The data come from the RNA Mapping Database (RMDB), library M2RFPK. This 207-nucleotide RNA was probed chemically with 2A3. 2A3 is a SHAPE reagent: it acylates the 2'-hydroxyl of flexible nucleotides of all four kinds.
[RMDB]
RNA sequence: GGGAACGACUCGAGUAGAGUCGAAAAGACAAGAUUCACGAAACCCAAGGUGCAUGCCGAGGUGCGGUAGGCCCCGUUAACAAACCGCAAAAAAAUAGUCGCAAACGACGAAAACUACGCACUCGCAAAAAGCGGCACGUCUUCGGACGUGCCGCAACCAAAUGUACAAGUUCGCUUGUACAUUUGGAAAAGAAACAACAACAACAAC
Reactivity to 2A3 in 0.01 (KOAc 150mM, MgCl2 10mM, bicine 150mM(pH8.5), 24C), signal-to-noise 1, nucleotides 027 to 156: g050a000c050a060a030g010a100u250u210c040a010c120g030a070a050a060c050c010c000a030a040g050g010u050g010c070a040u100g050c030c000g070a070g000g090u030g010c010g080g030u030a010g080g000c000c000c000c020g030u000u050a080a100c060a060a070a000c010c000g000c140a060a030a000a000a060a000a030u070a030g030u000c030g010c050a080a070a080c090g010a000c010g070a030a010a000a090c000u050a000c030g010c000a000c000u020c060g040c040a000a080a080a080a110g000c010g000g080c010a000c000g000u000c000u020u090c080g060g000a020c020g000u010g000c090c000g010c000a000a030